[RMDB]
RNA sequence: GGGAACGACUCGAGUAGAGUCGAAAAGGCCCGAGAGGGAGCAGCCCACCCCGGACCCGCGGCCGCUCGGGGGUCGCCGGAGGCAGGUCGGCCGGGGGAGUACCGGGCUCCGGGGGCCGGGUCCACCUGUACAAAGAAUUUUCGAAUUCUUUGUACAAAAAGAAACAACAACAACAAC
Reactivity to DMS in 0.01 (KOAc 150mM, MgCl2 10mM, bicine 150mM(pH8.5), 24C), signal-to-noise 3, nucleotides 027 to 126: g010g020c010c000c000g000a160g020a200g010g000g000a020g010c020a100g000c030c000c070a160c040c000c000c000g030g020a210c100c070c120g030c110g010g000c000c020g000c110u000c030g000g010g010g030g000u040c120g010c000c010g000g000a080g000g000c020a050g020g010u010c120g000g000c010c000g010g000g000g000g000a030g010u020a020c090c030g020g000g010c030u000c000c000g010g010g010g000g000c000c010g010g000g010u010c040c040a090c120c100
Reactivity to 2A3 in 0.01 (KOAc 150mM, MgCl2 10mM, bicine 150mM(pH8.5), 24C), signal-to-noise 2, nucleotides 027 to 126: g020g000c010c000c010g040a060g020a030g050g050g020a030g020c040a010g010c000c010c020a030c000c000c000c000g000g040a110c000c040c070g050c050g050g010c030c020g060c030u020c020g050g000g000g040g120u110c050g020c080c000g070g030a070g060g050c070a060g000g060u120c000g010g040c000c000g000g000g000g000g000a010g020u020a070c030c000g010g000g000c020u000c010c010g050g030g000g020g000c010c000g010g000g000u010c010c000a020c000c020
Notes:
The data come from the RNA Mapping Database (RMDB), library RFM100. Chemical mapping of a 177-nucleotide RNA with DMS and 2A3. For DMS, 5,998 sequencing reads were counted. 2A3 adducts were read by reverse transcription with SuperScript II with manganese. For DMS the reverse transcriptase was MarathonRT. Conditions: 150 mM KOAc, 10 mM MgCl2 and 150 mM bicine (pH 8.5), 24 C.